This 207-nucleotide RNA was probed chemically with DMS.
Conditions: 150 mM KOAc, 10 mM MgCl2 and 150 mM bicine (pH 8.5), 24 C.
The data come from the RNA Mapping Database (RMDB), library OK3TST.
For DMS the reverse transcriptase was MarathonRT.
Reactivities are given for positions 27 through 156.
[RMDB]
RNA sequence: GGGAACGACUCGAGUAGAGUCGAAAAUUGUGAGGAGUGCUAUAGGCUGGACACUUUGGAAAAAUCCCGAGUGCACUUUGUGGACACUGCUGGCCUGAAAUAGUGGGGCACACUGGCCUGAGAGCUCCCUGGCUCCCAGUGCCUAAGGUCCUUUACAUGAGGGUAUAUCAUUCGUGAUAUACCCUCAAAAAGAAACAACAACAACAAC
Reactivity to DMS in 0.01 (KOAc 150mM, MgCl2 10mM, bicine 150mM(pH8.5), 24C), signal-to-noise 1, nucleotides 027 to 156: u000u020g000u010g000a130g000g020a120g050u000g030c020u010a070u000a110g030g000c030u000g020g020a180c010a030c040u000u000u000g000g020a020a040a140a170a190u000c000c010c000g020a070g000u000g020c030a030c070u020u000u010g030u000g000g000a090c020a060c070u010g000c040u020g010g050c050c020u030g020a070a040a120u000a070g030u000g000g000g000g000c010a070c040a040c080u010g030g000c000c010u020g010a020g000a050g000c000u020c070c120c120u020g000g000c010u000c000c000c000a020g020u000g030c010c010u000a060a120g020g000u010c030c010u010u000u010a080c080a200